[RMDB]
The data come from the RNA Mapping Database (RMDB), library OK3TST.
The record gives the reactivity of an RNA of 207 nucleotides to DMS and 2A3.
2A3 adducts were read by reverse transcription with SuperScript II with manganese.
Reactivities are given for positions 27 through 156.
The DMS profile rests on 2,574 reads.
For 2A3, 934 sequencing reads were counted.
Conditions: 150 mM KOAc, 10 mM MgCl2 and 150 mM bicine (pH 8.5), 24 C.

RNA sequence: GGGAACGACUCGAGUAGAGUCGAAAAUGUCUUAGCAAAGAAUGUGGAUCCUUCUACAGUAUAUGGCAAGGAUGUAAUUGAGGUUGUUCACAGUUUUCUAAGGCGAUUACGAAUGUGGGAAAUGCUUUAUUGAAAAACUUGUCACUAUAAUUGAGUACUUUUAAAUAGCUUUCGAGCUAUUUAAAAGAAAAGAAACAACAACAACAAC
Reactivity to DMS in 0.01 (KOAc 150mM, MgCl2 10mM, bicine 150mM(pH8.5), 24C), signal-to-noise 2, nucleotides 027 to 156: u000g040u000c030u000u000a100g010c090a110a090a110g000a100a070u000g040u000g020g010a050u010c070c030u010u000c030u000a100c060a130g010u000a140u020a090u010g000g000c040a060a050g020g020a070u010g010u000a040a210u000u000g010a110g030g000u000u000g000u000u000c030a000c020a070g020u010u020u000u000c030u020a050a050g030g020c020g010a130u000u000a100c030g030a100a070u010g000u000g030g000g000a080a040a090u000g010c040u000u010u000a150u040u010g000a090a060a060a060a020c020u000u000g010u000c040a040c100u000a050u000a060a170u020u000g030a160g020u000a090
Reactivity to 2A3 in 0.01 (KOAc 150mM, MgCl2 10mM, bicine 150mM(pH8.5), 24C), signal-to-noise 3, nucleotides 027 to 156: u110g000u000c000u010u040a020g000c030a050a080a030g090a120a200u090g000u050g040g040a040u050c000c000u030u080c040u080a040c000a040g090u070a100u080a070u270g070g010c030a010a020g070g020a060u060g000u090a060a150u070u190g030a020g070g010u160u180g030u160u060c010a000c000a060g010u010u050u020u020c000u000a020a010g010g010c000g030a030u040u120a020c050g080a090a110u140g020u130g050g010g010a030a030a040u040g000c040u150u110u160a130u220u230g040a100a060a100a010a040c000u030u040g020u070c020a010c050u110a060u110a300a100u080u140g010a040g030u110a050